[RMDB]
RNA sequence: GGGAACGACUCGAGUAGAGUCGAAAAAGAUAUGGACGCUCGAGGUAGCUGGAGCUGUACUAACGCUGUCGGAAACGACAGCGGACCUUAGCGUUGAAAGCUACUCCCCACCGAGCGUCCUAAGUCAUCAUAUUGUUGCGUUCGCGCAACAAUAUGAAAAAGAAACAACAACAACAAC
Reactivity to DMS in 0.01 (KOAc 150mM, MgCl2 10mM, bicine 150mM(pH8.5), 24C), signal-to-noise 3, nucleotides 027 to 126: a130g040a070u020a300u000g000g000a010c010g000c000u000c000g000a150g030g000u000a010g000c010u000g000g000a150g000c000u000g020u000a010c020u010a180a300c010g000c000u020g020u000c000g010g010a130a060a250c010g000a020c000a000g010c000g020g010a020c300c110u000u000a030g010c000g020u000u010g020a140a150a040g000c020u000a020c010u000c110c060c000c050a300c170c010g000a010g010c010g010u000c010c010u010a000a070g020u010c090a180
Chemical mapping of a 177-nucleotide RNA with DMS. The reactions ran in a buffer of 150 mM KOAc, 10 mM MgCl2 and 150 mM bicine (pH 8.5), at 24 C.